This 177-nucleotide RNA was probed chemically with 2A3 and DMS.
Values cover nucleotides 27 to 126.
The reactions ran in a buffer of 150 mM KOAc, 10 mM MgCl2 and 150 mM bicine (pH 8.5), at 24 C.
DMS adducts were read by reverse transcription with MarathonRT.
For 2A3, 440 sequencing reads were counted.
As a SHAPE reagent, 2A3 marks flexible, mostly unpaired nucleotides at the ribose 2'-OH.
RNA sequence: GGGAACGACUCGAGUAGAGUCGAAAAAGAAGGCUGUUAAUAUAGCUAAAAACGCCUAUGAGAAGGAUAAGGCAGUGGCCCGUAAGUUAGAACGUAUGGCUGAUCAGGCUAUGACUUCUAUGUAUAACAUGACGCAGUCCUUCGGGACUGCGUCAUGAAAAGAAACAACAACAACAAC
Reactivity to 2A3 in 0.01 (KOAc 150mM, MgCl2 10mM, bicine 150mM(pH8.5), 24C), signal-to-noise 1, nucleotides 027 to 126: a020g050a070a030g000g060c090u060g090u130u000a120a040u250a130u030a040g000c000u000a020a020a020a020a020c000g000c000c000u000a000u240g130a260g000a010a020g240g000a000u170a000a220g000g000c000a000g080u020g210g000c000c000c030g100u290a100a100g240u000u100a090g000a130a000c030g030u190a000u000g000g000c000u000g000a300u180c220a190g000g030c000u080a000u160g000a050c000u000u000c000u060a080u060g190u000a140u000a190a000
Reactivity to DMS in 0.01 (KOAc 150mM, MgCl2 10mM, bicine 150mM(pH8.5), 24C), signal-to-noise 1, nucleotides 027 to 126: a030g100a130a170g000g000c000u010g000u000u070a110a210u070a040u000a020g010c020u000a000a010a050a120a010c200g000c000c000u000a000u030g000a180g000a150a140g050g000a090u020a060a060g000g000c040a150g060u030g000g000c000c010c000g060u020a190a110g000u000u000a000g020a000a140c080g000u070a000u000g000g000c000u000g000a210u130c120a130g020g000c000u000a030u050g000a000c000u010u000c010u000a010u060g010u000a050u030a040a250